[RMDB]
RNA sequence: GGGAACGACUCGAGUAGAGUCGAAAAUAGGCGAACGAGAGGCCCUCUCUUGUGCGGAGUUGUCACGCUGACACAAUUGUUAUGAUGUCCGAUUCCGGUAGCAUCGCGGCGAUGGUUUCAUAGGACAUCUUAUGAACCCAAGUGCUUCGGGGAAGCACAUGGUGAUGAGUUUCGACUCAUCACCAUGAAAAGAAACAACAACAACAAC
Reactivity to DMS in 0.01 (KOAc 150mM, MgCl2 10mM, bicine 150mM(pH8.5), 24C), signal-to-noise 6, nucleotides 027 to 156: u000a110g020g020c020g020a060a040c030g010a050g010a070g010g000c060c050c030u000c010u000c020u000u000g030u000g020c030g020g010a190g020u000u000g010u000c040a120c100g030c030u000g020a130c050a060c070a100a150u010u010g020u010u010a080u000g010a050u000g020u000c010c000g010a160u000u000c020c010g010g010u010a210g010c030a090u000c120g020c180g000g000c030g020a200u000g010g010u000u010u000c020a080u000a120g010g000a100c120a070u000c010u000u010a040u010g000a050a080c050c030c080a050a100g020u000g000c010u000u000c020g010g010g040g020a090a040g010c020a070
Reactivity to 2A3 in 0.01 (KOAc 150mM, MgCl2 10mM, bicine 150mM(pH8.5), 24C), signal-to-noise 5, nucleotides 027 to 156: u180a050g060g020c030g040a040a020c020g010a040g010a020g110g020c010c020c000u040c010u000c000u030u070g030u040g040c040g020g050a080g020u070u060g060u090c050a030c120g040c070u070g010a020c010a000c020a140a200u080u080g080u100u090a060u140g000a020u010g010u010c010c010g000a020u050u020c020c000g000g070u040a000g010c020a040u150c120g020c080g240g000c010g000a030u030g040g000u000u030u040c130a120u140a070g000g000a010c010a020u000c000u000u020a050u040g010a020a020c030c000c010a080a010g040u030g030c010u020u070c050g010g010g030g050a010a010g010c010a010